[RMDB]
RNA sequence: GGGAACGACUCGAGUAGAGUCGAAAAACGGCCACUAUGCGUACGCGCAUAGUGGCCGAACUGCAGUGAUGACUUUCUUGGGACACCUUUGGAUUUACCGUGAAAAUUAAUAAAUUCUGAGCAGCAAAGUGUAGUCUUCAUUCGUGAAGACUACACUAAAAGAAACAACAACAACAAC
Reactivity to 2A3 in 0.01 (KOAc 150mM, MgCl2 10mM, bicine 150mM(pH8.5), 24C), signal-to-noise 1, nucleotides 027 to 126: a000c000g000g000c000c000a000c000u000a000u010g020c020g070u100a100c210g000c000g000c060a020u000a000g010u000g000g000c000c000g040a000a000c050u010g000c020a100g080u050g130a160u070g040a170c030u020u130u120c030u100u260g060g010g000a000c070a030c000c000u090u130u130g030g000a040u020u010u140a150c020c010g010u060g050a130a000a000a000u120u120a000a200u190a070a140a010u070u000c000u050g040a030g000c000a000g050c060a040a110